[RMDB]
RNA sequence: GGGAACGACUCGAGUAGAGUCGAAAAUAUAAAAUUCCUAUAAAUAAGGAAAAAAUCUGCAGAUGCGUUGUAGUCUACACCUUCCAAAGGGGAAGAAAGGUGUACAAUUAACGCGGGCAGGUCUGCAAUUAUAUGCUAAUUUCGAUUAGCAUAUAAUAAAAGAAACAACAACAACAAC
Reactivity to 2A3 in 0.01 (KOAc 150mM, MgCl2 10mM, bicine 150mM(pH8.5), 24C), signal-to-noise 9, nucleotides 027 to 126: u190a010u070a020a060a020a060u030u020c010c000u070a070u180a190a070a050u200a040a070g000g040a060a080a030a020a020a050u040c010u020g000c000a020g040a300u130g030c000g000u000u010g040u040a020g000u000c010u010a000c000a000c000c000u010u010c010c000a110a170a100g210g060g020g030a040a050g050a070a040a000g020g000u000g000u000a010c020a010a030u110u050a020a000c000g000c000g010g040g010c010a010g000g020u010c030u030g000c000a010
Reactivity to DMS in 0.01 (KOAc 150mM, MgCl2 10mM, bicine 150mM(pH8.5), 24C), signal-to-noise 5, nucleotides 027 to 126: u050a160u050a070a060a090a110u000u000c000c000u000a150u050a110a070a150u050a100a050g000g010a000a030a100a100a120a040u010c030u000g000c000a030g010a070u010g010c010g010u000u000g010u000a060g020u030c230u000a010c000a000c010c000u000u000c020c030a110a130a120g020g010g020g010a100a100g010a060a020a010g010g000u000g010u000a000c040a060a070u030u010a010a000c000g030c000g010g010g010c040a020g000g010u000c030u010g000c130a090
Source information: Chemical mapping of a 177-nucleotide RNA with 2A3 and DMS. For DMS, 10,743 sequencing reads were counted. Values cover nucleotides 27 to 126.